Record summary:
An RNA of 177 nucleotides, treated with DMS and 2A3 and read out base by base. DMS adducts were read by reverse transcription with MarathonRT. Values cover nucleotides 27 to 126. Conditions: 150 mM KOAc, 10 mM MgCl2 and 150 mM bicine (pH 8.5), 24 C.
RNA sequence: GGGAACGACUCGAGUAGAGUCGAAAAUCGGAGGCCGACAUGGAGGUCUAUCUGUUCGAGCGUAACCAGUCGAAGGUCUCCGCCGAGGGAAUCCUCAACUGGAACGCCAAGAAGGGUGCUCCAAAAGCACUGCCUCCCUGUUCGCAGGGAGGCAGUGAAAAGAAACAACAACAACAAC
Reactivity to DMS in 0.01 (KOAc 150mM, MgCl2 10mM, bicine 150mM(pH8.5), 24C), signal-to-noise 1, nucleotides 027 to 126: u070c120g010g030a070g070g000c000c030g030a220c300a150u000g000g020a060g020g000u020c020u010a000u000c000u020g000u020u070c040g000a210g000c100g000u000a070a010c000c040a040g000u000c040g000a070a120g000g000u000c040u000c000c080g000c300c110g000a300g020g000g050a090a000u030c000c000u000c040a010a070c010u000g000g000a260a020c000g000c000c030a100a170g040a140a220g000g000g050u000g000c010u030c000c110a070a020a150a090g000
Reactivity to 2A3 in 0.01 (KOAc 150mM, MgCl2 10mM, bicine 150mM(pH8.5), 24C), signal-to-noise 2, nucleotides 027 to 126: u190c060g060g020a050g000g060c000c000g040a020c020a060u020g000g010a010g040g140u020c090u040a020u000c040u030g300u130u080c090g010a060g010c030g010u050a040a110c000c000a020g010u060c040g030a110a110g000g010u000c060u000c010c010g030c050c020g030a260g000g000g030a010a130u160c010c010u020c020a000a060c030u020g000g000a010a000c000g030c060c010a080a010g120a030a010g150g000g010u020g030c000u000c010c000a070a100a000a000g100